[RMDB]
RNA sequence: GGGAACGACUCGAGUAGAGUCGAAAAGCGAUAUUGGAUAGCAGAUUGAGGUGUCACGGUCUCUGUUAUUUAGUAUCGGAACGCAGGUAGUAUUAGAUUGUGAUACCUCAAGUACUAUCAGCGUAUAGUAACAGGUAGUAUUCGUACUAUCUGUUACAAAAGAAACAACAACAACAAC
Reactivity to DMS in 0.01 (KOAc 150mM, MgCl2 10mM, bicine 150mM(pH8.5), 24C), signal-to-noise 8, nucleotides 027 to 126: g020c030g010a070u030a070u010u030g020g010a010u000a000g020c130a050g000a200u000u010g010a020g000g020u000g000u000c010a010c010g000g010u000c010u000c110u010g010u000u010a030u010u000u010a110g030u000a080u040c180g000g010a050a050c190g000c080a070g000g000u000a030g010u010a040u030u010a030g000a010u000u000g010u010g000a010u000a020c020c010u000c000a010a010g010u020a080c000u000a000u000c010a080g010c060g010u010a070u020a100
Reactivity to 2A3 in 0.01 (KOAc 150mM, MgCl2 10mM, bicine 150mM(pH8.5), 24C), signal-to-noise 9, nucleotides 027 to 126: g050c010g020a030u040a080u100u200g120g000a000u010a010g010c040a030g060a250u030u040g010a010g010g020u040g030u030c020a010c020g030g000u000c030u000c010u040g020u020u010a080u030u080u040a080g020u030a070u110c030g020g060a040a010c030g000c020a010g020g020u080a020g020u010a150u140u090a040g030a030u010u030g010u010g030a030u020a030c000c000u010c010a010a000g000u000a010c000u000a000u010c020a010g020c020g020u070a060u080a120